[RMDB]
This 207-nucleotide RNA was probed chemically with DMS and 2A3. Reactivities are given for positions 27 through 156. The data come from the RNA Mapping Database (RMDB), library OK3TST. DMS adducts were read by reverse transcription with MarathonRT.
RNA sequence: GGGAACGACUCGAGUAGAGUCGAAAACGACGAGCGCGAUCGCCUGAUCGCCGAGCUGGUCUCACUGCGCGACUGCCGCGACGCCGCGAUCGCGGCCCUGAACAACCAGGCGCUCAUCGCCUGGUGGAAAGGGAACCGGCCCCCGCUGUGAACGAGGCGUACCAUUACAAUUCGUUGUAAUGGUACGAAAAGAAACAACAACAACAAC
Reactivity to DMS in 0.01 (KOAc 150mM, MgCl2 10mM, bicine 150mM(pH8.5), 24C), signal-to-noise 1, nucleotides 027 to 156: c010g150a110c040g020a100g030c010g020c030g000a050u000c050g000c060c020u070g020a040u000c040g030c040c010g020a020g030c020u020g020g000u000c050u000c030a280c150u010g040c110g030c070g000a090c050u000g040c110c040g040c020g050a040c030g020c030c120g000c040g000a120u000c020g070c000g040g000c000c030c040u000g000a180a110c040a250a040c000c000a000g020g000c000g000c060u010c220a070u000c040g030c040c000u010g010g000u000g000g000a110a230a140g010g010g000a130a090c050c040g000g020c000c000c000c010c050g050c020u030g000u010g010a080a120c000g000a170g000g000
Reactivity to 2A3 in 0.01 (KOAc 150mM, MgCl2 10mM, bicine 150mM(pH8.5), 24C), signal-to-noise 2, nucleotides 027 to 156: c050g120a010c100g040a010g060c020g000c010g000a010u000c020g050c040c060u200g010a280u010c020g060c100c030g000a020g000c120u160g040g020u050c020u050c060a140c140u300g060c110g010c030g110a020c010u020g010c020c010g040c000g020a010c040g030c070c000g020c010g020a000u000c000g000c020g020g000c000c000c010u030g040a090a000c010a020a060c030c000a000g020g000c010g020c030u230c070a200u280c030g010c000c000u000g010g000u000g000g000a090a010a000g000g000g000a020a030c040c000g040g030c000c010c000c000c010g040c070u090g000u050g110a150a030c050g010a100g020g050